Annotation:
This 177-nucleotide RNA was probed chemically with DMS and 2A3. It was measured as part of the RMDB library OK1LIB. In probing experiments dimethyl sulfate is read out at A N1 and C N3, which are open when not base-paired. DMS adducts were read by reverse transcription with MarathonRT.

RNA sequence: GGGAACGACUCGAGUAGAGUCGAAAACAAGAAAGGCGCCACAGCAGAAGCGUUCACGUCGCAGCGCCUGUCAGAUUCUGGUGAAUCUGCGAUUUCUGCUGUAGAAAAGACACGAAAGACGUGAUAAAUCAUCCCUAUAGUUCGCUAUAGGGAUGAUAAAAGAAACAACAACAACAAC
Reactivity to DMS in 0.01 (KOAc 150mM, MgCl2 10mM, bicine 150mM(pH8.5), 24C), signal-to-noise 7, nucleotides 027 to 126: c050a120a100g000a080a120a030g010g000c010g030c020c100a030c030a020g000c010a010g000a030a050g010c100g000u010u010c020a010c040g000u000c010g020c050a140g000c000g010c000c020u010g000u040c010a010g000a010u010u000c000u020g030g010u040g010a010a000u000c000u000g000c060g000a070u010u010u000c000u000g010c000u000g020u010a130g010a090a080a070a080g000a110c150a070c120g000a100a100a100g010a030c020g020u000g010a050u020a060a120
Reactivity to 2A3 in 0.01 (KOAc 150mM, MgCl2 10mM, bicine 150mM(pH8.5), 24C), signal-to-noise 9, nucleotides 027 to 126: c040a010a040g180a190a110a000g030g000c000g010c020c030a040c010a020g000c000a000g000a030a000g030c040g080u060u030c020a010c020g010u010c000g000c040a020g000c000g000c000c000u000g000u010c000a000g010a030u050u000c010u260g260g050u300g090a010a000u000c000u010g000c020g030a010u000u070u000c000u000g000c010u010g000u030a010g150a020a090a020a010g120a020c070a010c200g100a110a080a030g040a000c010g000u000g010a010u080a020a140
The reactions ran in a buffer of 150 mM KOAc, 10 mM MgCl2 and 150 mM bicine (pH 8.5), at 24 C. For 2A3 the reverse transcriptase was SuperScript II with manganese. The DMS profile rests on 24,916 reads.